[RMDB]
RNA sequence: GGGAACGACUCGAGUAGAGUCGAAAAGAUAUGGAACCCACAGAGCUGUAAGUAUAUCGGAAACGAUAUAUUGAGGAACUACUCUGUGUGGUUCCUAAGUCAAAAGUAACUUCUUCGGAAGUUACAACACCCUCUAAAACUUCGGUUUUAGAGGGUGAAAAGAAACAACAACAACAAC
Reactivity to 2A3 in 0.01 (KOAc 150mM, MgCl2 10mM, bicine 150mM(pH8.5), 24C), signal-to-noise 2, nucleotides 027 to 126: g000a000u030a020u040g000g000a010a000c000c040c000a000c000a010g040a030g000c290u240g080u100a020a000g010u010a000u000a000u020c010g000g030a010a010a000c010g000a000u000a000u000a020u020u030g000a060g100g090a200a150c170u190a010c010u210c000u020g010u000g000u140g050g010u000u000c000c000u010a010a000g010u000c000a000a000a150a000g010u010a000a000c000u020u010c000u030u030c110g130g010a010a030g000u030u010a010c000a010a010
Reactivity to DMS in 0.01 (KOAc 150mM, MgCl2 10mM, bicine 150mM(pH8.5), 24C), signal-to-noise 2, nucleotides 027 to 126: g000a050u010a130u010g000g000a030a020c000c000c000a020c020a000g000a020g030c070u000g000u020a120a040g010u000a000u000a010u000c000g000g000a020a050a070c000g020a010u000a000u000a000u000u000g010a110g010g000a140a070c300u020a120c000u000c000u010g000u000g010u020g020g010u000u010c010c000u010a010a050g000u020c020a110a080a100a100g010u000a000a000c000u000u000c000u000u010c200g030g000a020a000g000u010u000a000c000a100a190
The record gives the reactivity of an RNA of 177 nucleotides to 2A3 and DMS. Reactivities are rounded to 0.1 and cut off at 0 and 3. It was measured as part of the RMDB library TTRDEL.